[RMDB]
RNA sequence: GGGAACGACUCGAGUAGAGUCGAAAACGCACUCGCAGCUUAAUAACCUGCGCUGAGCCCUUGUCCCCCAGCUUGCCUGUGUCCUAGGGAAUUGGAAGGUCAUCCUUCACAGGAUCGUGUGGAAGUCAUUACUCGUGAGUGUUCGCACUCACGAGAACUCAGUUAAGAGGUUCGCCUCUUAACUGAGAAAAGAAACAACAACAACAAC
Reactivity to DMS in 0.01 (KOAc 150mM, MgCl2 10mM, bicine 150mM(pH8.5), 24C), signal-to-noise 1, nucleotides 027 to 156: c060g030c080a070c050u000c010g000c040a050g020c020u010u000a120a140u020a190a100c290c020u000g020c040g030c060u000g040a040g000c000c030c030u000u000g020u000c000c000c000c000c000a070g000c030u000u010g020c030c000u010g010u010g030u000c030c020u000a070g020g020g010a080a110u000u030g040g000a100a040g010g010u010c080a080u000c020c030u000u010c070a050c030a030g000g010a040u000c060g000u010g000u000g030g000a050a250g000u000c050a110u000u000a180c000u000c020g050u020g030a050g040u000g030u000u000c260g020c050a020c000u000c000a040c010g000a020g010a040a050
Reactivity to 2A3 in 0.01 (KOAc 150mM, MgCl2 10mM, bicine 150mM(pH8.5), 24C), signal-to-noise 2, nucleotides 027 to 156: c040g030c020a040c030u010c010g000c040a010g020c010u040u000a020a000u060a070a040c010c000u010g020c010g000c130u080g000a030g000c030c000c090u040u150g110u010c000c000c000c000c000a010g030c010u030u080g040c030c000u000g000u010g000u040c010c040u050a040g010g020g120a060a050u130u070g070g020a100a020g030g020u090c050a130u110c010c000u040u040c000a020c000a050g040g010a040u070c040g010u020g020u000g060g030a030a030g040u080c020a070u080u200a070c000u000c000g000u000g000a000g000u000g020u100u050c090g000c070a000c000u000c000a000c000g000a000g000a000a000
Structure probing data (DMS and 2A3) for a 207-nucleotide construct. The data come from the RNA Mapping Database (RMDB), library M2RFPK.